An RNA of 177 nucleotides, treated with 2A3 and DMS and read out base by base.
The RNA was probed in 150 mM KOAc, 10 mM MgCl2 and 150 mM bicine (pH 8.5) at 24 C.
Reactivities are given for positions 27 through 126.
It was measured as part of the RMDB library OK2TST.

[RMDB]
RNA sequence: GGGAACGACUCGAGUAGAGUCGAAAAAUGUACUAAGCACUUAAGACGAUGCGCAGGAAGGGAAUACACUAAACACACACACACACAUUAUACUUACCACUCUCUGCGGAAGAGAGAUCGGCUUACACUGGUACUCACCAUUCGUGGUGAGUACCAGAAAAGAAACAACAACAACAAC
Reactivity to 2A3 in 0.01 (KOAc 150mM, MgCl2 10mM, bicine 150mM(pH8.5), 24C), signal-to-noise 1, nucleotides 027 to 126: a000u060g040u020a060c040u080a010a030g060c040a010c030u200u130a040a000g100a000c050g070a050u070g000c070g000c080a000g000g110a020a040g160g000g050a050a010u130a040c030a010c100u160a040a100a000c010a000c000a000c000a000c000a000c000a000c000a000c030a000u090u090a080u070a100c090u090u090a040c010c010a010c020u000c000u000c010u020g010c070g290g110a060a000g010a000g000a000g010a010u150c050g030g090c010u040u080a010c030a000
Reactivity to DMS in 0.01 (KOAc 150mM, MgCl2 10mM, bicine 150mM(pH8.5), 24C), signal-to-noise 1, nucleotides 027 to 126: a140u000g060u000a100c080u020a100a100g020c070a070c050u000u000a080a100g010a050c120g000a140u010g000c050g020c130a070g000g000a070a050g000g000g000a080a040u000a070c120a090c070u000a110a030a060c020a060c020a030c000a010c020a010c040a070c000a010c050a070u010u000a110u020a020c120u000u000a190c070c040a050c000u000c000u000c020u000g020c300g000g010a130a000g000a010g000a010g000a040u040c180g010g010c060u000u010a060c190a180